[RMDB]
RNA sequence: GGGAACGACUCGAGUAGAGUCGAAAAAAACUUGAAAUCGAGAUCGAGAUCAAGUACUUGCUACCCCAUACAAUGUACUGUGGUCGAUAACCCUAGUUCUACGAUUACUAAUAAUAGUGAUCGAAGAGUGUGAGACAUGGUUCGCCAUGUCUCACACAAAAGAAACAACAACAACAAC
Reactivity to 2A3 in 0.01 (KOAc 150mM, MgCl2 10mM, bicine 150mM(pH8.5), 24C), signal-to-noise 1, nucleotides 027 to 126: a010a010a010c040u040u040g030a180a060a030u000c010g010a000g140a300u060c020g040a000g020a140u020c000a000a000g010u000a010c020u060u130g100c030u160a160c100c000c000c000a020u090a050c040a000a150u190g050u030a010c000u050g030u020g300g000u030c000g060a090u020a170a220c030c000c000u020a060g050u000u090c000u000a030c010g010a000u000u000a020c000u020a000a140u230a300a160u050a220g000u000g000a000u000c000g020a000a010g050a010
Reactivity to DMS in 0.01 (KOAc 150mM, MgCl2 10mM, bicine 150mM(pH8.5), 24C), signal-to-noise 1, nucleotides 027 to 126: a040a100a000c010u000u000g000a140a200a090u000c020g000a050g000a190u000c010g060a130g020a060u000c000a080a000g000u000a020c070u040u000g000c120u000a130c120c010c020c030a130u010a060c040a010a000u020g010u000a020c030u000g010u000g000g000u010c000g010a140u010a040a130c010c010c010u010a130g000u000u000c000u000a220c010g020a020u000u000a000c000u000a070a110u010a140a110u000a000g020u000g000a000u050c020g000a110a020g010a080
The record gives the reactivity of an RNA of 177 nucleotides to 2A3 and DMS. For 2A3 the reverse transcriptase was SuperScript II with manganese. It was measured as part of the RMDB library OK2TST. The RNA was probed in 150 mM KOAc, 10 mM MgCl2 and 150 mM bicine (pH 8.5) at 24 C. For DMS, 642 sequencing reads were counted.